[RMDB]
RNA sequence: GGGAACGACUCGAGUAGAGUCGAAAACUCACUCACUACGGUGAGUGAGAAUCUUAAGGCUCAAUAAAGCUUGCCUUGAGGUCCCUCAAGCAGAUAUAGACUGAAACAUUUAGUAAUUCCAAGCAGGGAGCAACGGCUCGAGUACGCUCGAGCCGAACGCAUAAUCAGCGUUCGCGCUGAUUAUGCGAAAAGAAACAACAACAACAAC
Reactivity to 2A3 in 0.01 (KOAc 150mM, MgCl2 10mM, bicine 150mM(pH8.5), 24C), signal-to-noise 1, nucleotides 027 to 156: c000u000c000a010c000u000c000a000c000u010a000c240g130g000u000g000a000g000u000g000a010g000a000a010u000c010u040u060a020a000g010g010c040u070c170a070a180u260a200a120a050g090c100u060u020g000c010c000u020u010g010a010g000g000u050c000c020c000u010c130a080a050g000c010a010g020a060u050a070u170a110g040a030c020u030g100a090a200a000c040a040u070u060u050a030g040u040a030a070u120u030c020c010a040a040g040c040a230g010g030g060a040g000c030a030a090c000g010g000c010u000c000g000a000g000u000a090c270g020c010u000c000g000a000g000c010c000g000a000a010